Structure probing data (2A3) for a 207-nucleotide construct. Reactivities are given for positions 27 through 156. The reactions ran in a buffer of 150 mM KOAc, 10 mM MgCl2 and 150 mM bicine (pH 8.5), at 24 C. For 2A3, 566 sequencing reads were counted. High 2A3 reactivity points to a flexible backbone, as in loops and unpaired stretches. Source: RMDB library OK3TST, as collected in RNAgym.
RNA sequence: GGGAACGACUCGAGUAGAGUCGAAAAAGGCUGAAUCUAACGAUUUCAUUGGUGGAUUUGGUUUAGGUUCUAAAUCUCCUUUUAGUUAUACCGAUACAUUUAGUAUUACUUCAUAUCAUAAAGGUGAAAUUCGUGGUUAUGUAGCUUACAUGGAUGGGAAAGGGUCUCUUUUCGAAGAGACCCUUUCAAAAGAAACAACAACAACAAC
Reactivity to 2A3 in 0.01 (KOAc 150mM, MgCl2 10mM, bicine 150mM(pH8.5), 24C), signal-to-noise 1, nucleotides 027 to 156: a000g040g030c030u000g020a010a020u010c010u050a080a010c040g020a040u010u090u040c010a060u030u130g050g050u120g050g000a040u000u000u090g050g000u060u080u010a050g000g040u060u000c000u010a040a020a070u010c000u090c010c060u030u050u050u050a010g020u000u030a020u010a080c030c020g040a030u070a220c060a100u110u150u140a030g000u000a020u050u070a040c010u010u090c100a110u070a050u270c030a030u080a070a150a000g000g020u040g030a040a040a000u030u070c020g000u030g060g000u060u030a020u060g070u100a030g060c000u010u010a010c020a040u050g020g040a010u020g000g040